[RMDB]
The record gives the reactivity of an RNA of 177 nucleotides to 2A3 and DMS.
RNA sequence: GGGAACGACUCGAGUAGAGUCGAAAAGGCAGCGAAUUCGUUCGCUGCCAAUACAGGACGUGGAGCCGGCUUCACGGCGCACGUCGAUGACGCCCGGGCGGGAGAAUCCAGAUUUCGAUCUGGAUAAGGUAAAUAACAUAUUCGUAUGUUAUUUACCAAAAGAAACAACAACAACAAC
Reactivity to 2A3 in 0.01 (KOAc 150mM, MgCl2 10mM, bicine 150mM(pH8.5), 24C), signal-to-noise 8, nucleotides 027 to 126: g010g000c000a000g000c010g010a010a010u090u080c160g080u090u000c000g020c000u000g000c000c000a000a000u020a010c000a010g140g000a000c000g010u020g020g050a080g020c010c000g060g030c100u300u240c140a100c080g000g000c010g000c000a000c000g000u000c000g010a090u060g060a020c070g070c000c010c020g010g050g000c090g020g040g030a070g070a050a040u000c000c000a000g000a020u060u100u130c190g060a010u000c000u010g000g000a000u010a010a020
Reactivity to DMS in 0.01 (KOAc 150mM, MgCl2 10mM, bicine 150mM(pH8.5), 24C), signal-to-noise 9, nucleotides 027 to 126: g000g010c000a000g020c000g010a010a030u000u010c220g010u000u000c000g020c000u000g010c000c000a010a020u000a120c120a080g000g000a010c010g020u000g010g010a190g030c000c010g000g010c300u010u010c200a100c010g010g000c000g010c020a010c010g010u000c010g000a070u000g000a140c170g000c010c000c010g010g000g010c050g010g000g010a130g000a160a060u000c000c000a010g000a020u000u000u010c170g010a020u000c000u000g000g000a010u000a030a060
About this RNA
Conditions: 150 mM KOAc, 10 mM MgCl2 and 150 mM bicine (pH 8.5), 24 C. It was measured as part of the RMDB library M2PK50.